[RMDB]
RNA sequence: GGGAACGACUCGAGUAGAGUCGAAAAGCACGGAGACAUGCACGGAAACGUAGACGGAGGCCCCAUGUCGAACGUGGCUGUCCGAGGCCUCCGUAUUUGACUGGUAAUUCAGUCGUUAGGACAGCUAAGUAUUUACGAGCUUCGGCUCGUAAAUACUAAAAGAAACAACAACAACAAC
Reactivity to 2A3 in 0.01 (KOAc 150mM, MgCl2 10mM, bicine 150mM(pH8.5), 24C), signal-to-noise 1, nucleotides 027 to 126: g060c030a010c090g020g010a050g000a020c000a020u040g030c060a020c080g060g040a050a110a000c070g060u070a060g080a070c010g000g000a000g000g000c000c000c000c000a040u070g020u020c060g000a130a000c010g040u060g050g030c000u000g000u000c000c010g010a030g000g010c000c000u040c070c030g000u020a070u030u090u080g000a000c010u010g000g010u090a080a080u190u120c000a000g000u010c000g000u030u130a010g020g020a010c000a000g010c010u020a060
Reactivity to DMS in 0.01 (KOAc 150mM, MgCl2 10mM, bicine 150mM(pH8.5), 24C), signal-to-noise 2, nucleotides 027 to 126: g010c100a080c000g010g010a200g020a060c010a050u010g000c270a050c030g000g010a070a090a110c090g020u010a090g010a040c020g020g000a020g000g000c000c020c090c050a060u000g010u000c020g020a050a160c150g000u010g000g010c000u000g000u000c000c010g000a090g010g010c000c000u000c000c010g010u000a020u000u000u000g020a010c020u000g000g010u030a120a160u010u020c010a000g020u000c020g020u000u010a090g020g000a020c010a010g000c010u000a070